Structure probing data (2A3) for a 207-nucleotide construct. The reactions ran in a buffer of 150 mM KOAc, 10 mM MgCl2 and 150 mM bicine (pH 8.5), at 24 C. It was measured as part of the RMDB library ARCHII.
[RMDB]
RNA sequence: GGGAACGACUCGAGUAGAGUCGAAAAUGGGAAAAGAUAACUGCCAACGAAAACUACGCUUUAGCUGCUUAAUAACGCAGCUACGUCCUGACGGAAGCUUGCCCGGGGCUUCUGUCGGGGCGUGACCGGACCGGGCUGGCUUAUGAAGGGUGUCCCGCAACCGAGAAUUGUUCGCAAUUCUCGGUUGAAAAGAAACAACAACAACAAC
Reactivity to 2A3 in 0.01 (KOAc 150mM, MgCl2 10mM, bicine 150mM(pH8.5), 24C), signal-to-noise 1, nucleotides 027 to 156: u110g000g000g030a090a130a050a020g120a110u150a200a120c090u130g040c020c010a100a110c110g080a040a080a070a030c110u180a060c040g010c070u130u200u110a000g000c000u010g040c000u210u110a190a040u110a300a020c160g000c000a000g000c000u000a000c000g000u000c000c000u010g000a000c000g000g000a010a000g000c000u010u020g000c070c000c000g010g030g010g000c000u000u000c010u010g000u000c000g020g030g010g000c000g000u000g000a000c080c010g100g010a010c000c020g010g000g000c010u000g000g000c000u060u070a050u200g050a030a040g030g000g050u070g070u000c000c000c000g020